[RMDB]
RNA sequence: GGGAACGACUCGAGUAGAGUCGAAAAAUAGGCUUAUCAAGAGAGGUGGAGGGAUUGGCCCGAUGAAACCCGGCAGCCAGAAAUGGUGCCAAUUCCUUCAGCGGAAACGUUGAAAGAUGAGCCGAUGGAACCCGUCGGUUCGCCGACGGGAAAAGAAACAACAACAACAAC
Reactivity to 2A3 in 0.01 (KOAc 150mM, MgCl2 10mM, bicine 150mM(pH8.5), 24C), signal-to-noise 2, nucleotides 027 to 129: a040u100a040g000g000c000u000u010a010u050c020a100a000g120a000g040a140g110g140u000g000g000a000g000g020g020a020u050u000g010g000c010c130c000g080a070u220g090a040a010a010c060c040c020g060g000c120a010g040c030c010a010g030a030a030a040u090g000g000u020g000c020c000a000a000u020u000c000c020u010u000c010a020g040c030g010g000a010a170a040c060g050u120u150g070a130a070a000g000a000u010g000a000g040c020c000g000a000u050g050g050a010a000
Reactivity to DMS in 0.01 (KOAc 150mM, MgCl2 10mM, bicine 150mM(pH8.5), 24C), signal-to-noise 2, nucleotides 027 to 129: a040u010a070g030g030c060u000u000a000u030c030a060a100g000a200g030a080g120g000u000g020g000a040g070g100g070a040u000u100g010g010c070c080c020g040a030u050g070a120a080a050c120c090c030g010g060c270a090g040c000c040a000g010a100a070a000u010g070g000u060g010c070c000a040a060u010u000c010c050u000u070c080a000g020c030g000g050a100a060a140c110g060u050u080g060a080a060a140g000a010u080g020a050g000c000c010g000a080u010g030g010a160a100
The record gives the reactivity of an RNA of 170 nucleotides to 2A3 and DMS. 2A3 adducts were read by reverse transcription with SuperScript II with manganese. The data come from the RNA Mapping Database (RMDB), library 15KLIB. The RNA was probed in 150 mM KOAc, 10 mM MgCl2 and 150 mM bicine (pH 8.5) at 24 C.